[RMDB]
RNA sequence: GGGAACGACUCGAGUAGAGUCGAAAAGCUUUUUUUUUGGAUUAGGCGUGGAGGCGAAAGUCACCCUCCUCGCAUCGCAAGUUCGUGCUUGCGACUUACACGUAGGGCGAGGGGUGGGCGAAAGUUGAAAACACGAUGUUGUUCGCAACAUCGUGAAGUUACCGAUAGGCUUCGGCCUAUCGGUAACAAAAGAAACAACAACAACAAC
Reactivity to 2A3 in 0.01 (KOAc 150mM, MgCl2 10mM, bicine 150mM(pH8.5), 24C), signal-to-noise 1, nucleotides 027 to 156: g070c090u120u100u040u030u050u000u020u080u090g130g040a140u130u140a010g040g150c020g050u000g000g000a010g000g030c040g050a240a020a000g110u090c070a070c000c000c000u000c000c000u020c020g000c000a010u080c010g030c000a000a000g040u280u300c210g100u300g040c000u000u030g000c000g000a000c000u000u170a180c110a000c070g000u040a070g000g080g180c140g030a150g000g000g000g010u250g010g110g000c090g010a130a000a000g040u030u010g030a140a040a000a000c000a000c000g000a000u000g000u000u000g030u000u000c120g030c070a000a000c000a000u000c000g000u010g000a000a020
An RNA of 207 nucleotides, treated with 2A3 and read out base by base. The reactions ran in a buffer of 150 mM KOAc, 10 mM MgCl2 and 150 mM bicine (pH 8.5), at 24 C. The 2A3 profile rests on 382 reads.